[RMDB]
RNA sequence: GGGAACGACUCGAGUAGAGUCGAAAAUAAGCAAAAGACAACCACCUUUCCCGCUGACAAUAGCGUUAUCGCUCUGCACUUCGGUAAUAUGAGGGCACAGUAAAUCCCGCAAGGAUGAGAAUGUGAUUAAACAGUUACAGCUUCGGCUGUAACUGAAGGCUAUUAGAUGGUUCGCCAUCUAAUAGCCAAAAGAAACAACAACAACAAC
Reactivity to DMS in 0.01 (KOAc 150mM, MgCl2 10mM, bicine 150mM(pH8.5), 24C), signal-to-noise 1, nucleotides 027 to 156: u020a040a070g010c030a100a030a140a160g010a040c070a210a130c000c010a060c140c010u040u030u000c010c040c030g000c130u020g040a180c160a090a160u000a050g040c000g040u020u000a030u020c060g010c010u000c060u010g120c010a070c030u000u000c050g060g070u040a020a080u000a090u010g000a130g000g050g040c030a070c010a050g000u000a020a090a140u000c000c010c050g070c200a050a090g000g000a100u000g000a120g000a070a090u020g000u000g010a060u000u000a110a100a100c040a010g000u000u000a020c000a010g010c000u020u000c300g020g020c010u000g030u010a000a060c030u000g040a020a050
Reactivity to 2A3 in 0.01 (KOAc 150mM, MgCl2 10mM, bicine 150mM(pH8.5), 24C), signal-to-noise 2, nucleotides 027 to 156: u130a050a000g080c040a010a060a060a040g100a090c040a050a020c060c040a020c020c010u000u010u000c000c010c000g000c050u020g030a030c040a110a230u100a120g010c070g110u140u060a100u110c010g000c010u040c040u080g030c010a030c080u060u040c000g010g070u070a080a030u040a100u190g060a100g000g000g000c000a000c000a020g000u020a020a040a000u000c020c010c000g090c040a050a010g000g020a030u030g000a000g020a060a040u050g010u010g040a030u080u150a060a060a030c000a000g010u000u000a000c000a000g000c000u030u030c110g120g020c000u000g000u000a000a000c000u000g000a010a020